[RMDB]
RNA sequence: GGGAACGACUCGAGUAGAGUCGAAAAGGUGUACUCACUGUUCUUACUGUCAAAUGCACUGUAACAUCCAUGUUAAUUUGAUACAUGCUCUUGGAUUUGGAUUCUUGUUCAACUGUCUCCGUUCUUUGUAUAUAAUUGGCCACUGGUCCCAUCCUGAUAGGAGGAUUAUCUUCGGAUAAUCCUCCUAAAAAGAAACAACAACAACAAC
Reactivity to 2A3 in 0.01 (KOAc 150mM, MgCl2 10mM, bicine 150mM(pH8.5), 24C), signal-to-noise 2, nucleotides 027 to 156: g000g000u010g020u050a110c050u050c050a070c020u010g110u120u090c090u130u110a090c040u020g100u070c050a060a060a000u050g000c020a010c000u010g020u110a110a020c040a130u040c030c020a040u080g080u060u160a200a190u170u100u180g040a020u050a070c020a020u020g030c010u030c010u050u030g000g060a040u120u000u160g090g000a050u070u020c040u040u070g040u140u030c040a120a080c050u050g020u020c020u000c050c000g020u050u030c000u110u060u080g030u010a020u000a020u010a090a150u050u010g030g000c080c000a070c040u050g000g040u020c000c050c010a130u090c000c010u000g040a050
Reactivity to DMS in 0.01 (KOAc 150mM, MgCl2 10mM, bicine 150mM(pH8.5), 24C), signal-to-noise 2, nucleotides 027 to 156: g000g030u000g020u020a070c070u030c070a090c050u000g000u000u010c020u000u010a050c050u000g020u000c020a050a110a110u000g000c010a110c050u010g010u000a060a090c080a100u000c040c040a090u020g020u000u010a060a110u010u000u020g030a160u010a020c010a040u000g030c060u000c040u010u000g020g010a100u000u000u000g030g010a090u000u010c060u010u000g050u000u000c020a080a100c090u000g000u000c010u000c030c040g000u010u010c020u010u000u000g040u000a100u000a080u000a030a130u000u010g010g010c040c010a070c030u000g030g000u000c010c040c010a140u000c010c000u000g010a300